[RMDB]
RNA sequence: GGGAACGACUCGAGUAGAGUCGAAAAGGAUUAUUGUCACUAACAUGUUGAAUGAUGCACUCGAUGAAGCAUUGCAAGGAGCUGUCCUAGCAGCUGGUGGUGCUGUCGAACUGAAAGGAUUGUAUGAGUGCGGACUAUAUUUCGAUAUAGUCCGCACAAAAGAAACAACAACAACAAC
Reactivity to DMS in 0.01 (KOAc 150mM, MgCl2 10mM, bicine 150mM(pH8.5), 24C), signal-to-noise 2, nucleotides 027 to 126: g000g000a050u000u000a090u020u020g000u010c050a060c090u030a050a160c160a040u020g000u000u010g010a060a110u020g010a130u030g000c020a080c090u010c000g000a010u020g000a040a010g000c010a030u020u000g010c000a110a090g010g000a080g030c020u010g000u000c090c090u040a090g000c070a020g010c010u000g000g000u000g000g030u000g000c000u010g000u010c010g000a020a060c080u010g010a100a090a070g020g030a130u000u000g020u000a040u000g000a300
Reactivity to 2A3 in 0.01 (KOAc 150mM, MgCl2 10mM, bicine 150mM(pH8.5), 24C), signal-to-noise 2, nucleotides 027 to 126: g090g020a010u120u110a040u070u300g030u050c020a020c080u140a120a020c090a120u100g000u080u040g180a190a180u130g040a020u100g000c010a070c060u010c030g040a050u160g290a020a000g000c000a000u000u030g000c000a000a120g090g040a020g090c020u010g040u130c040c000u050a020g020c000a000g000c000u050g060g000u010g000g010u030g000c000u060g040u000c000g000a090a030c020u010g070a010a000a150g090g040a110u050u130g060u040a080u040g030a020